[RMDB]
RNA sequence: GGGAACGACUCGAGUAGAGUCGAAAACUUUGGCGCCGGCAGGUUGAAGCGCCGGCGGAUUUCCUUCCGCGUCAUCCAGCCCGGCUCGCCGGCGCGGCCAUAGGCAAUGCGGGCUCCCUCCAAGCGCCUAUUAACGAAGGUUCGCCUUCGUUAAUAGAAAAGAAACAACAACAACAAC
Reactivity to 2A3 in 0.01 (KOAc 150mM, MgCl2 10mM, bicine 150mM(pH8.5), 24C), signal-to-noise 2, nucleotides 027 to 126: c050u220u180u200g100g010c010g040c010c050g030g000c100a110g200g090u180u230g160a160a040g060c020g000c110c050g020g000c010g030g010a000u010u010u020c010c000u100u050c070c060g020c060g010u030c020a010u010c010c040a000g030c010c000c020g050g000c040u040c080g030c020c020g000g000c010g000c020g000g000c020c010a200u160a050g040g000c000a060a070u100g030c040g000g020g050c010u030c000c000c010u020c000c020a070a020g080c000g040c020
Reactivity to DMS in 0.01 (KOAc 150mM, MgCl2 10mM, bicine 150mM(pH8.5), 24C), signal-to-noise 3, nucleotides 027 to 126: c080u000u000u010g000g030c000g040c000c020g000g000c030a080g030g000u010u000g000a180a250g010c230g020c030c030g010g020c060g010g000a020u010u000u010c040c040u010u000c070c060g020c070g020u000c080a040u000c040c020a090g010c100c030c000g000g020c040u000c090g030c020c020g000g020c010g010c020g000g010c050c030a070u000a100g020g000c060a100a070u000g010c030g020g000g000c030u000c010c000c000u010c030c040a100a120g010c180g020c140
Background: This 177-nucleotide RNA was probed chemically with 2A3 and DMS. As a SHAPE reagent, 2A3 marks flexible, mostly unpaired nucleotides at the ribose 2'-OH. It was measured as part of the RMDB library OK2TRN. The RNA was probed in 150 mM KOAc, 10 mM MgCl2 and 150 mM bicine (pH 8.5) at 24 C.